[RMDB]
RNA sequence: GGGAACGACUCGAGUAGAGUCGAAAAGAUAUGGAUUUAUAGGGAGCCUAAGUCGGAAACGACGAUGGGCUUUGAUCUAUCAAAUCCUAAGUCAAAAGAGAGUCAUCAGUUCGCUGAUGACUCUCAACCGAUUAGUUAACUUCGGUUAACUAAUCGGAAAAGAAACAACAACAACAAC
Reactivity to DMS in 0.01 (KOAc 150mM, MgCl2 10mM, bicine 150mM(pH8.5), 24C), signal-to-noise 3, nucleotides 027 to 126: g000a010u000a060u000g000g000a000u000u000u000a020u000a020g010g000g020a010g020c000c000u000a130a280g010u000c010g030g000a020a000a030c000g010a020c010g010a170u010g000g000g010c000u000u000u010g000a030u000c010u000a000u000c220a000a010a010u000c000c000u000a010a100g010u000c000a080a070a140a130g010a010g010a020g010u000c000a000u000c000a000g010u000u010c260g010c020u000g000a010u000g000a000c000u000c000u000c000a020a070
Reactivity to 2A3 in 0.01 (KOAc 150mM, MgCl2 10mM, bicine 150mM(pH8.5), 24C), signal-to-noise 2, nucleotides 027 to 126: g000a010u020a010u050g000g000a000u000u000u000a000u020a010g010g030g000a010g010c000c030u040a100a010g000u000c000g020g000a040a010a010c020g000a010c010g010a030u130g080g000g000c000u080u200u020g000a000u000c010u010a000u020c160a040a050a000u040c000c000u010a010a000g020u000c020a010a050a170a090g010a000g010a000g010u000c000a010u000c000a000g040u080u150c220g080c200u020g010a010u000g000a000c010u000c000u000c000a000a020
Structure probing data (DMS and 2A3) for a 177-nucleotide construct. 2A3 adducts were read by reverse transcription with SuperScript II with manganese. The 2A3 profile rests on 5,588 reads.